[RMDB]
Annotation: An RNA of 207 nucleotides, treated with 2A3 and read out base by base. The data come from the RNA Mapping Database (RMDB), library VIROID. Conditions: 150 mM KOAc, 10 mM MgCl2 and 150 mM bicine (pH 8.5), 24 C.
RNA sequence: GGGAACGACUCGAGUAGAGUCGAAAAGCUAGUCGAGCGGACUCCGGGUGUAGCCCCCUGUUCUCUCACGCUCUUUUUCUUUGACGCAGCGGCGGGUGGGUACCCAGGGUAAAACACAAUUGGUGUUUCCCCGGUAACACCGUGCGGUUCCUGUGGUUCAUUCCAAUUGGUUCGCCAAUUGGAAUGAAAAAGAAACAACAACAACAAC
Reactivity to 2A3 in 0.01 (KOAc 150mM, MgCl2 10mM, bicine 150mM(pH8.5), 24C), signal-to-noise 1, nucleotides 027 to 156: g000c080u030a020g080u110c030g050a000g000c030g000g020a030c010u000c150c040g010g050g000u130g080u180a110g030c010c000c000c000c010u100g080u090u020c010u000c000u020c030a000c030g070c000u000c000u090u150u000u000u040c000u090u020u060g000a020c010g000c030a000g010c010g190g000c040g080g000g040u200g100g000g060u070a110c000c030c000a000g020g000g000u090a080a120a140a000c050a010c000a040a300u180u190g000g000u000g040u000u040u180c000c000c000c000g000g070u030a020a000c010a020c000c000g030u160g050c050g090g090u020u050c000c050u010g070u080g090g080u030